[RMDB]
Structure probing data (2A3) for a 207-nucleotide construct. The RNA was probed in 150 mM KOAc, 10 mM MgCl2 and 150 mM bicine (pH 8.5) at 24 C. The data come from the RNA Mapping Database (RMDB), library M2RFPK. For 2A3 the reverse transcriptase was SuperScript II with manganese. Reactivities are given for positions 27 through 156.
RNA sequence: GGGAACGACUCGAGUAGAGUCGAAAAGGGACGCCUUUAGAAGAAGAGGCUAGGUGGUAUUCCGGUGUGGGAUACUUGGUAAUAUGUGACGCUAAUUGCAUAAGAUUGUAGGACGGAAUUUACAGUCAAAACGGUCCUGCGUUCGCGCAGGACCGAACUUCUAGGAAAUGUUCGCAUUUCCUAGAAGAAAAGAAACAACAACAACAAC
Reactivity to 2A3 in 0.01 (KOAc 150mM, MgCl2 10mM, bicine 150mM(pH8.5), 24C), signal-to-noise 2, nucleotides 027 to 156: g010g000g030a030c050g020c020c000u110u070u090a100g040a220a010g030a050a040g000a030g020g000c030u040a060g000g040u050g040g040u050a050u050u040c030c030g000g080u130g050u230g040g020g000a020u030a060c000u040u060g000g000u060a130a090u050a070u160g080u030g010a010c020g000c100u040a070a060u090u130g020c010a020u060a070a080g000a060u030u080g030u010a010g020g060a010c040g020g030a000a010u060u070u080a050c000a020g000u030c020a000a000a020a080c000g000g000u000c000c030u010g000c000g000u020u080c270g000c000g000c000a000g010g000a000c000c000g000a000a000